[RMDB]
Structure probing data (DMS and 2A3) for a 177-nucleotide construct. The RNA was probed in 150 mM KOAc, 10 mM MgCl2 and 150 mM bicine (pH 8.5) at 24 C. 2A3 adducts were read by reverse transcription with SuperScript II with manganese. The DMS profile rests on 1,568 reads. The data come from the RNA Mapping Database (RMDB), library OK1LIB.
RNA sequence: GGGAACGACUCGAGUAGAGUCGAAAAUGACGGCAGAAUAUGAUGUAGACGUCGCGAUUCUUUUUUUUUUUUUGUUUUGCUGCAACCCCCCGAAAUGCGUUGAAACGCAAAGAACUACCGCCACCCCCGCAAGGGGAUGGUUCGCCAUCCCCUUGCGAAAAGAAACAACAACAACAAC
Reactivity to DMS in 0.01 (KOAc 150mM, MgCl2 10mM, bicine 150mM(pH8.5), 24C), signal-to-noise 1, nucleotides 027 to 126: u000g010a110c040g000g000c060a030g030a120a140u070a110u080g030a030u000g000u040a100g000a040c000g000u000c050g110c030g000a080u010u000c010u000u000u000u000u000u000u000u000u000u000u070u050u000g000u000u010u000u000g000c010u000g000c040a010a100c050c000c040c010c000c010g000a070a020a040u020g000c060g000u010u020g000a040a050a040c010g030c070a060a060a040g010a050a050c010u020a150c090c020g000c020c000a190c000c000c020c040
Reactivity to 2A3 in 0.01 (KOAc 150mM, MgCl2 10mM, bicine 150mM(pH8.5), 24C), signal-to-noise 2, nucleotides 027 to 126: u110g010a000c000g000g020c010a020g060a150a010u200a110u240g170a040u070g040u150a070g070a130c020g040u050c030g040c030g060a080u070u030c050u000u000u000u030u000u000u020u000u010u000u000u050u120g040u000u100u030u040g020c040u020g020c000a000a110c000c000c030c000c000c000g050a010a060a080u100g000c020g000u020u170g120a230a170a020c010g000c030a010a060a000g060a040a030c120u110a040c000c000g010c000c000a040c020c000c000c000